[RMDB]
RNA sequence: GGGAACGACUCGAGUAGAGUCGAAAAGGUUCAAGACCGCGCUCCUUCCUCCAGAGGCGAUCGACUUCGGCAUCGCUUGCACCGCCAUUCAAAACGCUUUUCGAGAAGAUGAACGCUUUCGAUCCGCGUGAGCAAAAUGGUUCGCCAUUUUGCUCACAAAAGAAACAACAACAACAAC
Reactivity to 2A3 in 0.01 (KOAc 150mM, MgCl2 10mM, bicine 150mM(pH8.5), 24C), signal-to-noise 2, nucleotides 027 to 126: g020g000u020u040c010a040a050g050a090c030c030g040c010g040c040u020c000c000u040u050c010c020u030c010c020a030g040a060g110g000c020g000a010u040c030g090a080c020u090u060c070g040g000c030a030u020c030g030c040u040u050g000c010a030c060c040g050c040c000a040u130u100c050a030a060a050a020c030g000c020u010u030u040u040c030g030a070g040a100a060g020a030u110g070a060a000c050g000c020u030u010u040c020g030a040u010c000c020g030c030
Reactivity to DMS in 0.01 (KOAc 150mM, MgCl2 10mM, bicine 150mM(pH8.5), 24C), signal-to-noise 2, nucleotides 027 to 126: g020g010u000u000c090a120a140g010a100c060c040g030c050g020c010u000c020c020u000u020c040c020u010c020c020a120g020a120g010g010c040g020a030u000c090g000a080c090u010u020c060g030g000c030a060u000c060g000c030u010u000g000c060a070c020c050g020c040c040a070u000u000c090a110a050a040a080c090g000c020u000u000u000u000c030g000a050g040a050a080g040a040u000g010a100a060c210g010c050u000u000u010c030g020a060u000c040c040g030c140
Notes: Chemical mapping of a 177-nucleotide RNA with 2A3 and DMS. The 2A3 profile rests on 1,837 reads. The reactions ran in a buffer of 150 mM KOAc, 10 mM MgCl2 and 150 mM bicine (pH 8.5), at 24 C. The data come from the RNA Mapping Database (RMDB), library OK2TST. For DMS the reverse transcriptase was MarathonRT. Values cover nucleotides 27 to 126.